[RMDB]
RNA sequence: GGGAACGACUCGAGUAGAGUCGAAAAGAUUUAAAAUUAGAAGCUAGACUUAAUGCUUUAGAAGAAGUAGUUUUAGAGUUGGGACAAGAUGUGGCCAAUUUAAAGACCAGAAUGUCCACUAGGUGUCAUGCAAAUUAUGACUUUAUCUGCGUUACAAAUUAGGUACUCAUUUCGAUGAGUACCUAAUAAAAGAAACAACAACAACAAC
Reactivity to DMS in 0.01 (KOAc 150mM, MgCl2 10mM, bicine 150mM(pH8.5), 24C), signal-to-noise 2, nucleotides 027 to 156: g020a220u010u010u000a010a070a070a110u000u000a140g000a150a110g010c040u010a060g020a180c080u000u020a020a100u010g010c050u000u000u000a070g020a130a140g000a040a060g020u000a080g010u000u000u000u000a120g030a120g020u000u010g010g020g000a080c030a060a100g010a120u000g010u000g010g090c010c000a030a130u010u010u010a130a090a140g000a080c010c020a060g010a200a120u010g010u000c010c060a070c060u000a080g040g000u010g000u000c020a020u020g020c030a080a060a120u000u000a060u000g010a070c040u000u000u000a070u010c090u010g010c070g010u000u000a110c070a040a100
Reactivity to 2A3 in 0.01 (KOAc 150mM, MgCl2 10mM, bicine 150mM(pH8.5), 24C), signal-to-noise 2, nucleotides 027 to 156: g000a000u070u130u190a070a170a080a130u150u130a070g060a080a000g020c030u040a060g080a160c020u070u130a120a050u150g000c000u090u020u090a050g010a170a000g020a040a030g030u050a010g020u030u060u090u190a060g010a020g050u120u080g060g020g020a000c000a000a040g020a130u050g020u030g090g050c030c000a010a030u000u060u190a160a100a000g010a040c010c010a020g060a050a070u040g040u000c010c000a030c050u030a010g100g030u030g000u020c020a000u010g100c020a030a020a080u110u040a090u170g020a010c000u020u110u010a110u000c040u060g040c010g070u060u060a030c040a060a180